Structure probing data (2A3 and DMS) for a 177-nucleotide construct. The 2A3 profile rests on 17,774 reads. The reactions ran in a buffer of 150 mM KOAc, 10 mM MgCl2 and 150 mM bicine (pH 8.5), at 24 C. Reactivities are given for positions 27 through 126. DMS adducts were read by reverse transcription with MarathonRT. Source: RMDB library TTRDEL, as collected in RNAgym.
[RMDB]
RNA sequence: GGGAACGACUCGAGUAGAGUCGAAAAGAUAUGGACAGCAGCGCAUGGCCGAGGUGGAUCGGAAACGAUCCAUACAGCCAUGAACUACGCUGGUCCUAAGUCAAACCGAACGCUUCGGCGUUCGGAAUCUUCAUAGUAAGUUCGCUUACUAUGAAGAAAAAGAAACAACAACAACAAC
Reactivity to 2A3 in 0.01 (KOAc 150mM, MgCl2 10mM, bicine 150mM(pH8.5), 24C), signal-to-noise 3, nucleotides 027 to 126: g030a030u070a040u150g010g000a010c010a070g070c010a000g020c130g000c020a000u010g000g030c010c010g040a100g010g070u010g000g000a000u000c000g010g030a050a080a030c020g000a000u000c000c000a010u020a000c000a000g000c000c020a000u000g000a000a000c000u060a030c060g010c000u030g050g050u050c000c000u010a120a020g050u020c050a080a040a110c010c000g000a000a000c000g000c010u060u140c300g160g010c000g000u000u000c010g000g000a000a040
Reactivity to DMS in 0.01 (KOAc 150mM, MgCl2 10mM, bicine 150mM(pH8.5), 24C), signal-to-noise 8, nucleotides 027 to 126: g000a050u010a300u000g010g000a070c000a030g030c020a040g010c300g010c010a010u000g000g010c000c010g010a300g000g000u000g000g000a000u000c000g000g000a120a070a120c000g010a000u000c000c000a000u000a000c000a020g000c000c000a010u000g000a040a050c050u010a170c160g010c000u000g000g010u000c000c000u010a050a100g000u000c040a100a120a190c000c010g010a000a010c000g010c000u000u010c220g020g000c000g010u000u000c000g000g000a030a020